[RMDB]
RNA sequence: GGGAACGACUCGAGUAGAGUCGAAAACGUGAUGUGCAGGAACGGCACCCGGUCAAACAAGCCGUUGACGAAUUGCAGGAUCUUGUCGCCGAGGGUGCUCAGAUCGGUCGUCCGCACCCAGUCGGCGGGUGUGAGUCUAAUUCGUUAGACUCACACCAAAAGAAACAACAACAACAAC
Reactivity to 2A3 in 0.01 (KOAc 150mM, MgCl2 10mM, bicine 150mM(pH8.5), 24C), signal-to-noise 5, nucleotides 027 to 126: c050g070u060g080a080u140g050u040g020c020a020g030g050a080a040c020g010g020c010a080c010c030c000g050g060u140c090a100a080a110c020a120a040g010c030c020g040u020u060g050a070c060g050a100a130u160u110g000c030a030g070g080a080u030c000u060u120g080u090c030g000c000c000g010a040g000g030g000u000g010c020u040c020a020g010a050u100c060g060g140u100c060g050u000c050c030g000c000a010c000c020c010a020g230u060c020g000g020c000g020
Reactivity to DMS in 0.01 (KOAc 150mM, MgCl2 10mM, bicine 150mM(pH8.5), 24C), signal-to-noise 6, nucleotides 027 to 126: c100g020u010g000a110u010g010u010g010c030a050g010g020a070a070c060g010g010c010a110c050c030c010g010g000u010c090a040a050a090c160a100a130g010c060c050g010u010u000g000a090c070g000a070a060u010u000g010c060a060g010g000a090u000c050u000u000g010u010c040g020c000c010g020a080g000g000g010u000g000c010u010c220a100g000a040u000c090g020g010u010c120g010u010c040c130g000c010a010c010c010c010a140g010u000c020g010g000c010g010

Description
The record gives the reactivity of an RNA of 177 nucleotides to 2A3 and DMS. DMS adducts were read by reverse transcription with MarathonRT. High DMS reactivity at an A or C suggests that its Watson-Crick edge is free. The DMS profile rests on 8,721 reads. Values cover nucleotides 27 to 126. The RNA was probed in 150 mM KOAc, 10 mM MgCl2 and 150 mM bicine (pH 8.5) at 24 C.